[RMDB]
RNA sequence: GGGAACGACUCGAGUAGAGUCGAAAAGAUAUGGAGACUCCACGUUGGUCGAUGAAAUGCUUCGGAAACGAAGCAUGGAGACCGAUGUGGAGGUCUCCUAAGUCAAACUCCUCGUUCGCGAGGAGAAGAUAUGAGAACUCUUCGGAGUUCUCAUAUCAAAAGAAACAACAACAACAAC
Reactivity to 2A3 in 0.01 (KOAc 150mM, MgCl2 10mM, bicine 150mM(pH8.5), 24C), signal-to-noise 1, nucleotides 027 to 126: g020a000u110a020u190g000g010a010g010a000c000u000c000c000a000c020g010u000u000g030g010u000c020g050a300u070g010a040a000a000u010g000c010u010u000c010g010g020a100a110a080c010g020a000a010g000c000a000u000g000g000a020g010a000c000c000g000a010u010g010u000g000g000a000g000g000u030c010u000c000c000u010a000a010g000u000c030a040a050a110c000u000c000c030u000c010g030u050u100c300g000c000g190a010g000g020a000g000a000a010
Reactivity to DMS in 0.01 (KOAc 150mM, MgCl2 10mM, bicine 150mM(pH8.5), 24C), signal-to-noise 3, nucleotides 027 to 126: g000a060u010a300u010g020g000a030g010a190c000u000c000c000a000c000g010u000u000g000g000u000c020g000a140u030g020a090a130a010u010g000c000u000u010c000g010g010a150a090a250c010g010a010a010g010c000a000u000g000g000a030g010a010c000c000g010a010u000g000u000g010g000a000g010g010u000c000u000c000c010u000a000a090g000u000c030a150a150a220c010u000c000c010u000c000g020u010u020c250g030c040g010a000g010g000a010g000a050a040

This 177-nucleotide RNA was probed chemically with 2A3 and DMS. Reactivities are given for positions 27 through 126. The 2A3 profile rests on 4,670 reads. 2A3 adducts were read by reverse transcription with SuperScript II with manganese. DMS (dimethyl sulfate) methylates the pairing face of unpaired adenines and cytosines. The RNA was probed in 150 mM KOAc, 10 mM MgCl2 and 150 mM bicine (pH 8.5) at 24 C.